[RMDB]
RNA sequence: GGGAACGACUCGAGUAGAGUCGAAAAGCAGACCACAUAUGUGGUCGAUGCCAUGGAGGCCCAUCAGUUUAUCAAGGCUCCUGGCAUCACUACUGCUAUUGAGCAGGCUGCUCUAGCAGCGGCCAACAAUUAACACAGACUUCGGUCUGUGUUAAUUAAAAGAAACAACAACAACAAC
Reactivity to 2A3 in 0.01 (KOAc 150mM, MgCl2 10mM, bicine 150mM(pH8.5), 24C), signal-to-noise 6, nucleotides 027 to 126: g020c050a010g010a020c060c010a010c060a080u300a120u300g000u000g000g000u000c020g010a010u000g000c000c010a060u220g010g030a020g110g200c020c040c010a120u160c060a050g120u140u200u280a190u220c080a080a030g010g000c010u000c000c000u000g000g000c000a000u010c000a000c020u180a040c010u000g020c000u030a100u170u200g060a060g030c070a050g120g030c030u040g010c000u020c030u060a090g000c100a010g000c040g000g020c000c000a010a020c040
Reactivity to DMS in 0.01 (KOAc 150mM, MgCl2 10mM, bicine 150mM(pH8.5), 24C), signal-to-noise 6, nucleotides 027 to 126: g020c070a100g010a070c000c000a020c010a250u010a090u020g030u000g010g010u010c080g000a010u000g000c000c010a010u020g020g000a030g000g000c010c000c050a100u000c180a100g000u000u000u000a090u020c150a140a190g000g000c010u000c000c010u010g000g010c000a000u000c010a090c120u000a120c050u000g000c010u000a130u000u000g000a090g030c080a090g010g020c060u000g010c000u010c060u020a090g020c080a000g010c010g010g020c030c030a100a070c190
About this RNA:
This 177-nucleotide RNA was probed chemically with 2A3 and DMS. Values cover nucleotides 27 to 126. DMS adducts were read by reverse transcription with MarathonRT.